RNA sequence: GGGAACGACUCGAGUAGAGUCGAAAAAAAAAAAGAUAUGGAGCUUACCUGCAGCUCCGUUGAUCGCUUUCGGAAACGAAAGCGGGAGGAGCUGAACUACAGGGAUAAGCUCCUAAGUCAAAAAAAACAUGUUAUGAUACUUCGGUAUCAUAACAUGAAAAGAAACAACAACAACAAC
Reactivity to DMS in 0.01 (KOAc 150mM, MgCl2 10mM, bicine 150mM(pH8.5), 24C), signal-to-noise 1, nucleotides 027 to 126: a010a010a100a110a000a090a060g000a010u020a300u020g000g000a040g000c030u000u000a040c010c000u000g010c000a000g000c010u000c000c020g000u000u050g020a060u010c000g000c000u000u000u010c000g000g000a140a070a180c000g000a010a000a010g010c020g000g010g020a010g030g000a020g050c020u000g010a030a020c060u030a300c000a020g000g000g010a200u000a060a030g000c020u000c000c000u000a020a050g000u010c020a000a000a000a010a140a120a100a130